RNA sequence: GGGAACGACUCGAGUAGAGUCGAAAAAGGGUACCUUAUACAUAUCCUGCUCCAUGACUUAUGAUAUAAAACAGUCAUGCGAACCACUUUCUGCAGAACAGACAGCUUGAGAAAUCUCAGCCAUUCCUGUUAUGUGGUUUCCAUCCUGCAGCUGCUAUAAAUGCAGCUGAUUCGUCAGCUGCAUUUAAAAAGAAACAACAACAACAAC
Reactivity to 2A3 in 0.01 (KOAc 150mM, MgCl2 10mM, bicine 150mM(pH8.5), 24C), signal-to-noise 5, nucleotides 027 to 156: a000g050g010g010u050a060c040c040u210u180a160u060a170c060a030u100a040u070c000c000u020g010c020u000c010c000a010u000g000a000c010u060u130a040u210g140a070u150a090u160a300a130a020a030c030a020g000u000c000a000u010g050c080g030a020a030c010c000a020c030u090u150u040c010u020g000c000a010g010a060a000c000a010g060a020c020a020g020c030u150u240g040a020g030a090a280a240u120c020u000c010a000g000c020c010a070u110u080c020c010u010g010u040u060a070u120g030u030g010g000u010u020u010c020c000a050u040c010c030u030g010c000a040g020c030u110g020c030u090a060
Reactivity to DMS in 0.01 (KOAc 150mM, MgCl2 10mM, bicine 150mM(pH8.5), 24C), signal-to-noise 4, nucleotides 027 to 156: a040g000g020g040u000a030c050c050u010u000a210u010a180c150a060u000a030u000c000c010u000g010c030u010c020c000a030u010g010a060c020u010u000a140u000g020a220u010a160u000a090a120a100a110c120a050g000u000c010a020u000g000c090g000a040a150c030c020a030c050u000u000u000c040u000g000c020a080g020a050a200c050a060g010a090c160a070g010c020u000u010g020a090g010a110a090a140u020c010u000c010a070g010c020c020a260u010u000c090c030u000g020u000u000a070u010g030u000g010g010u000u000u000c030c020a130u000c020c020u010g030c030a130g010c050u000g010c050u000a250